[RMDB]
An RNA of 207 nucleotides, treated with 2A3 and DMS and read out base by base. 2A3 adducts were read by reverse transcription with SuperScript II with manganese. The reactions ran in a buffer of 150 mM KOAc, 10 mM MgCl2 and 150 mM bicine (pH 8.5), at 24 C. The DMS profile rests on 9,038 reads.
RNA sequence: GGGAACGACUCGAGUAGAGUCGAAAAGAAUCACCGUACCUAUUUAGGUUUACGCUCCAAGAUCGGUGGAUAGCAGCCCUAUCAAUACCUAGGAGAACUGUGCUAUGUUUAGAAGAUUAGGUAGUCUAUUACACAGCCAUGUUCGCAUGGCUGUGAACAGAAAAUUAUCUUUCGAGAUAAUUUUCUGAAAAGAAACAACAACAACAAC
Reactivity to 2A3 in 0.01 (KOAc 150mM, MgCl2 10mM, bicine 150mM(pH8.5), 24C), signal-to-noise 4, nucleotides 027 to 156: g070a020a040u120c020a020c030c010g030u050a030c000c030u060a160u260u230u230a030g000g040u020u050u100a050c040g010c020u030c010c010a090a030g040a150u100c030g010g010u010g000g030a030u050a020g030c060a020g010c010c020c000u030a050u090c050a080a080u050a110c000c010u020a010g020g020a040g030a080a060c060u080g010u040g030c040u050a030u120g060u040u090u040a100g030a170a020g010a110u140u080a020g030g020u000a020g040u040c030u030a120u090u110a070c000a000c000a000g000c000c000a000u000g020u010u050c150g010c100a000u000g000g000c000u000g000u000g000a000a000
Reactivity to DMS in 0.01 (KOAc 150mM, MgCl2 10mM, bicine 150mM(pH8.5), 24C), signal-to-noise 4, nucleotides 027 to 156: g000a120a070u000c000a100c030c010g040u000a070c030c010u000a180u010u000u010a050g000g010u000u000u000a070c060g020c030u000c020c010a070a120g010a050u010c030g010g030u000g000g000a100u020a090g010c040a160g000c060c050c010u000a170u000c050a090a120u000a070c040c040u000a080g010g020a090g000a070a080c070u000g030u000g010c020u000a090u000g000u000u000u010a080g000a110a120g010a120u000u000a050g010g020u000a070g000u000c050u000a150u020u000a220c010a020c010a010g010c000c010a010u000g020u000u000c290g030c010a010u000g000g010c010u000g010u000g000a030a140